Structure probing data (2A3 and DMS) for a 207-nucleotide construct. Values cover nucleotides 27 to 156. For 2A3 the reverse transcriptase was SuperScript II with manganese. The reactions ran in a buffer of 150 mM KOAc, 10 mM MgCl2 and 150 mM bicine (pH 8.5), at 24 C. High 2A3 reactivity points to a flexible backbone, as in loops and unpaired stretches. It was measured as part of the RMDB library OK3TST. DMS adducts were read by reverse transcription with MarathonRT.
RNA sequence: GGGAACGACUCGAGUAGAGUCGAAAAAAUGAAAGCAGCUCUCCUUAUGUGUCUGCCUACUUCAUUCUUCGGUAAGUUUAACAGUUCAUCUAGCUACCCUUUAUUUGAAAUGAUUUCCAGAUGCCUCCUCAUAUAAAUUGCUGACUUCUGGAUAUAAUAAUACGAUUAGCUUCGGCUAAUCGUAUUAAAAAGAAACAACAACAACAAC
Reactivity to 2A3 in 0.01 (KOAc 150mM, MgCl2 10mM, bicine 150mM(pH8.5), 24C), signal-to-noise 1, nucleotides 027 to 156: a040a000u060g010a010a000a010g060c000a000g000c020u010c000u060c070c020u190u300a220u300g070u000g010u040c000u010g050c000c000u050a120c030u060u050c000a020u020u020c010u080u010c040g010g020u120a170a020g080u060u080u160a140a030c020a040g000u060u110c030a070u020c120u030a010g070c000u020a060c000c000c010u100u300u050a140u180u110u090g100a040a010a040u090g030a070u040u010u020c000c000a040g060a020u040g000c020c020u000c000c000u020c070a000u070a000u050a110a130a160u150u100g020c000u020g050a020c000u000u000c000u020g030g000a000u020a000u000a020a080
Reactivity to DMS in 0.01 (KOAc 150mM, MgCl2 10mM, bicine 150mM(pH8.5), 24C), signal-to-noise 1, nucleotides 027 to 156: a050a050u020g010a090a010a100g020c010a060g010c020u000c030u000c010c060u010u000a210u000g030u020g030u000c020u020g000c080c010u000a020c030u000u000c000a010u020u000c060u000u010c070g000g010u000a070a130g030u000u000u000a070a150c040a130g000u000u000c070a120u000c040u000a060g000c040u000a120c010c020c040u000u000u000a110u010u050u000g010a110a070a090u020g000a180u000u000u000c010c000a060g020a070u010g000c020c020u000c030c060u010c050a090u010a150u010a040a060a100u010u010g030c030u010g010a100c090u000u000c010u010g010g020a230u000a100u000a060a160